[RMDB]
RNA sequence: GGGAACGACUCGAGUAGAGUCGAAAAGCUCUAUCCUUCGGGAUAGAGCAAACGCUACGAUUGACGGUGAAGCCGGACCUGAGGUUCAGCUUAGUCGGGCUAAAAGUCACAUGUUCGCAUGUGACAACAUACCUUAUCGCUUCGGCGAUAAGGUAUGAAAAGAAACAACAACAACAAC
Reactivity to 2A3 in 0.01 (KOAc 150mM, MgCl2 10mM, bicine 150mM(pH8.5), 24C), signal-to-noise 5, nucleotides 027 to 126: g000c000u000c000u010a000u010c000c010u020u080c200g090g010g010a000u000a030g010a000g010c000a000a000a000c050g000c030u230a090c040g130a120u070u150g110a030c030g090g010u050g060a040a010g030c010c010g010g060a050c020c050u180g150a090g060g010u040u040c030a010g000c000u010u010a010g010u020c020g020g020g000c010u060a060a030a030a130g000u010c000a000c000a010u030g040u050u080c260g020c100a000u010g010u000g000a000c000a000a010
Reactivity to DMS in 0.01 (KOAc 150mM, MgCl2 10mM, bicine 150mM(pH8.5), 24C), signal-to-noise 4, nucleotides 027 to 126: g000c000u000c000u000a000u000c000c010u000u020c230g020g000g010a010u000a000g000a020g000c000a000a040a060c150g020c060u000a070c090g000a140u010u010g010a070c050g020g000u000g000a090a080g000c010c020g010g000a020c020c010u000g010a140g030g010u010u010c010a030g010c010u000u000a160g000u000c010g020g000g010c040u010a050a050a070a090g000u000c000a010c000a010u000g000u000u010c170g010c010a020u000g010u000g010a000c000a070a080